[RMDB]
RNA sequence: GGGAACGACUCGAGUAGAGUCGAAAAGCCGGUCGCGAAACUUUAGGUGCAUGCCGAGUUGGUAACAGAACUCGUAAAUCCACUGUUGCAACUUCUUAUAGUUGCCAAUGACGAAAACUACGGCCAGGAAUUCGCUCUCGCUGCGUAAGCAGCCUUAGUAAUUAGGUAACUUCGGUUACCUAAUUACAAAAGAAACAACAACAACAAC
Reactivity to DMS in 0.01 (KOAc 150mM, MgCl2 10mM, bicine 150mM(pH8.5), 24C), signal-to-noise 3, nucleotides 027 to 156: g030c020c000g040g010u000c010g020c040g010a090a100a080c060u000u000u000a000g010g010u010g030c060a080u000g030c090c020g020a080g000u000u000g010g010u000a070a120c150a150g000a040a050c040u000c020g000u000a050a060a130u000c030c030a050c040u000g000u000u010g020c000a040a050c050u000u000c190u000u000a100u010a060g010u000u000g010c050c070a030a080u000g020a110c050g010a080a050a050a090c020u000a030c040g000g000c020c020a070g010g010a060a190u000u010c050g010c020u010c030u000c040g020c000u000g040c010g000u010a140a300g010c030a080g000c000c020u000u000a250
Reactivity to 2A3 in 0.01 (KOAc 150mM, MgCl2 10mM, bicine 150mM(pH8.5), 24C), signal-to-noise 7, nucleotides 027 to 156: g060c010c010g000g030u050c030g000c030g100a090a070a100c040u100u160u190a070g010g010u030g040c030a040u110g060c030c010g000a010g000u000u010g030g030u050a070a030c040a040g050a050a000c010u010c040g030u080a070a040a070u050c060c020a030c040u060g040u080u040g000c000a010a010c010u120u120c040u110u270a100u110a220g000u010u010g020c020c010a080a120u100g040a030c050g040a050a070a040a040c060u100a040c020g010g000c020c010a070g030g030a040a070u110u070c060g000c050u010c010u020c060g000c000u000g000c010g040u080a110a030g000c000a000g000c000c000u000u010a020
An RNA of 207 nucleotides, treated with DMS and 2A3 and read out base by base.
The RNA was probed in 150 mM KOAc, 10 mM MgCl2 and 150 mM bicine (pH 8.5) at 24 C.
The DMS profile rests on 7,019 reads.